RNA sequence: GGGAACGACUCGAGUAGAGUCGAAAACGCGAAGUUCCUGCUCGAGGUCGAGGGCGUCGAUCUCUCCGUCGAGGAGGAACUCGAGGCCGAAGACCGGAUCUCCUCGGUGAUGCGGGAAGUGCGAGAGUAUUUACCUAUCCUUCGGGAUAGGUAAAUAAAAAGAAACAACAACAACAAC
Reactivity to 2A3 in 0.01 (KOAc 150mM, MgCl2 10mM, bicine 150mM(pH8.5), 24C), signal-to-noise 9, nucleotides 027 to 126: c050g020c020g040a070a020g060u010u010c010c000u020g070c010u020c030g030a040g010g050u060c050g020a060g030g080g050c040g300u090c040g020a130u030c040u010c000u010c060c010g140u130c050g040a040g020g020a000g000g020a020a020c030u000c010g030a050g050g000c000c020g050a100a010g040a050c000c000g020g000a020u010c020u010c010c010u040c030g070g010u100g030a070u140g030c010g000g010g020a040a040g080u080g080c030g020a060g010a020g130
Reactivity to DMS in 0.01 (KOAc 150mM, MgCl2 10mM, bicine 150mM(pH8.5), 24C), signal-to-noise 9, nucleotides 027 to 126: c060g000c040g010a070a090g000u000u000c000c000u000g010c010u000c040g000a080g000g020u010c050g010a120g010g000g010c050g000u010c080g000a070u010c020u020c000u000c030c030g000u030c130g000a190g000g000a020g010g010a040a040c100u010c010g010a030g000g010c000c000g000a110a220g000a050c010c010g000g000a050u010c030u010c020c020u020c070g000g010u020g010a070u020g010c030g010g000g010a030a050g010u010g000c030g000a110g000a120g020